[RMDB]
An RNA of 207 nucleotides, treated with 2A3 and read out base by base. Source: RMDB library OK3TST, as collected in RNAgym. For 2A3, 2,030 sequencing reads were counted. The reactions ran in a buffer of 150 mM KOAc, 10 mM MgCl2 and 150 mM bicine (pH 8.5), at 24 C.
RNA sequence: GGGAACGACUCGAGUAGAGUCGAAAAUGCUCUCUCCUUGAAACACAGUUUUCUCUUUACUUUAAUGACCCCAUUCUCACUGAGGAGUGAGGAAAGACUUCACUCUUUUCUUCCGAAAUCACUAGGCAUUCCUCCUCUCUUUCACUCCCAAAUCACAGUCAGUAUGACGUUUCGACGUCAUACUGACAAAAGAAACAACAACAACAAC
Reactivity to 2A3 in 0.01 (KOAc 150mM, MgCl2 10mM, bicine 150mM(pH8.5), 24C), signal-to-noise 2, nucleotides 027 to 156: u100g000c010u000c000u010c000u000c020c030u030u090g080a080a120a010c080a030c030a120g010u080u010u030u020c050u020c000u060u120u070a100c040u060u130u170a180a100u120g040a070c000c000c000c040a050u060u000c070u030c030a080c030u050g020a000g050g000a010g010u010g000a010g030g010a070a100a000g090a020c000u070u030c060a050c040u030c000u060u050u060u030c040u050u040c020c020g070a050a080a050u080c030a050c080u030a010g030g030c010a020u050u060c000c000u000c030c020u030c000u010c000u040u080u010c020a030c090u010c000c000c000a060a070a030u130c050a060c020a040